[RMDB]
RNA sequence: GGGAACGACUCGAGUAGAGUCGAAAAAAGUGGUAUGACUAUGAGAAGUGCAACAAAGAAGACUAUCAUCGUGAGAAGGCUAUUGUUAAGAUGUCUGAAUUUGCUGCAUCUGGGAAGACAUUAGCUAGAUUCGAAUAGGGUUCGCCCUAUUCGAAUCAAAAGAAACAACAACAACAAC
Reactivity to DMS in 0.01 (KOAc 150mM, MgCl2 10mM, bicine 150mM(pH8.5), 24C), signal-to-noise 2, nucleotides 027 to 126: a050a030g030u010g000g000u010a050u000g010a090c070u010a120u030g010a100g030a090a090g010u000g000c040a050a040c070a010a040a070g010a150a060g000a050c070u010a060u010c040a030u000c080g000u020g000a120g000a130a120g020g000c020u000a050u000u010g000u000u000a080a050g010a040u000g010u000c060u000g000a060a080u000u010u000g020c050u010g010c030a010u000c010u000g010g030g010a090a040g000a020c050a020u010u000a040g020c030u010a110
Reactivity to 2A3 in 0.01 (KOAc 150mM, MgCl2 10mM, bicine 150mM(pH8.5), 24C), signal-to-noise 1, nucleotides 027 to 126: a000a000g130u160g000g000u180a110u170g090a090c030u010a000u120g050a030g010a110a050g010u030g070c050a060a080c030a090a070a030g090a070a000g070a050c010u080a030u100c000a010u080c070g090u000g010a130g030a180a000g070g000c000u080a030u030u010g020u000u050a030a020g050a030u030g070u000c080u010g080a170a150u000u010u170g100c060u030g000c010a010u000c040u010g090g000g000a070a030g030a040c000a010u040u040a010g000c000u050a030